[RMDB]
RNA sequence: GGGAACGACUCGAGUAGAGUCGAAAAGUGGCCUUCGGGCCACAAAAAAGAUAUGGACGGUGAAGGGAGCGAUAAGUUCCCAAUCGGAAACGAUUGCGGCCCGAACUUUUGACGCUCCCACACCGUCCUAAGUCAAAAAGGAUUGUUCGCAAUCCAACGUUACUGAAAGUUUCGACUUUCAGUAACGAAAAGAAACAACAACAACAAC
Reactivity to DMS in 0.01 (KOAc 150mM, MgCl2 10mM, bicine 150mM(pH8.5), 24C), signal-to-noise 1, nucleotides 027 to 156: g050u010g040g030c000c020u000u030c250g050g060g000c090c020a000c020a010a010a060a110a100a030g010a100u000a300u000g000g000a030c000g010g050u000g000a240a100g000g000g000a020g000c000g010a260u000a030a060g010u010u000c000c000c000a020a030u000c000g030g000a210a150a150c000g000a110u000u010g000c030g000g040c300c040c080g000a120a040c050u000u000u000u000g030a180c080g000c020u000c020c000c040a080c010a010c000c040g000u000c000c000u000a000a010g020u000c040a010a060a020a180a060g010g000a150u000u000g040u000u030c220g080c060a030a060u000c030c020a020a170
Reactivity to 2A3 in 0.01 (KOAc 150mM, MgCl2 10mM, bicine 150mM(pH8.5), 24C), signal-to-noise 3, nucleotides 027 to 156: g020u000g000g000c000c000u040u050c300g050g030g020c000c030a040c050a010a000a010a000a010a020g020a030u030a020u080g000g010a000c000g000g040u060g060a300a190g110g010g000a000g010c030g020a070u030a160a040g000u000u040c000c020c020a000a000u000c010g000g020a080a080a010c020g000a000u020u060g060c230g070g020c090c160c060g000a000a010c020u030u060u090u240g100a060c050g000c000u010c000c010c000a000c010a000c000c000g000u000c000c000u000a000a000g000u000c010a000a000a000a050a020g010g010a010u000u020g060u100u160c230g010c170a010a000u000c010c000a010a000
Chemical mapping of a 207-nucleotide RNA with DMS and 2A3. The data come from the RNA Mapping Database (RMDB), library RNAMAK. The reactions ran in a buffer of 150 mM KOAc, 10 mM MgCl2 and 150 mM bicine (pH 8.5), at 24 C. DMS adducts were read by reverse transcription with MarathonRT. For DMS, 1,699 sequencing reads were counted. 2A3 adducts were read by reverse transcription with SuperScript II with manganese.